[RMDB]
RNA sequence: GGGAACGACUCGAGUAGAGUCGAAAAUCAUUGGCUUCGCUGCGCGCUGCGUUGCCUAGGCUUCAGAUGCUUCGUACUGUUGCCAACGAUGCAAUUUCCAAACGCUAAUGCGAAAGUGUGCAAACAAUUCUCUUGUGCAGUUCGCUGCACAAGAGAAAAAAGAAACAACAACAACAAC
Reactivity to 2A3 in 0.01 (KOAc 150mM, MgCl2 10mM, bicine 150mM(pH8.5), 24C), signal-to-noise 1, nucleotides 027 to 126: u040c000a000u010u080g000g000c000u020u000c010g020c050u080g000c020g000c010g030c030u020g000c000g020u030u020g000c000c000u040a070g000g000c000u010u000c000a020g030a200u120g070c040u080u180c060g070u060a040c020u020g010u030u000g030c000c000a030a040c090g000a010u000g020c020a050a020u000u020u000c010c000a050a050a070c040g020c000u110a200a000u230g000c010g050a000a040a020g040u030g040u020g000c040a070a010a050c030a070a150
Reactivity to DMS in 0.01 (KOAc 150mM, MgCl2 10mM, bicine 150mM(pH8.5), 24C), signal-to-noise 2, nucleotides 027 to 126: u020c030a090u000u000g000g020c020u010u000c030g000c020u000g000c050g000c200g010c050u000g000c050g000u000u000g000c000c010u010a070g000g030c040u010u010c010a010g020a080u000g020c210u000u000c100g040u000a060c070u030g010u000u000g030c000c010a050a070c070g030a030u020g010c200a180a100u000u000u000c010c010a140a110a130c050g020c000u030a080a180u000g000c020g050a140a070a040g010u020g000u000g010c000a070a020a130c250a090a150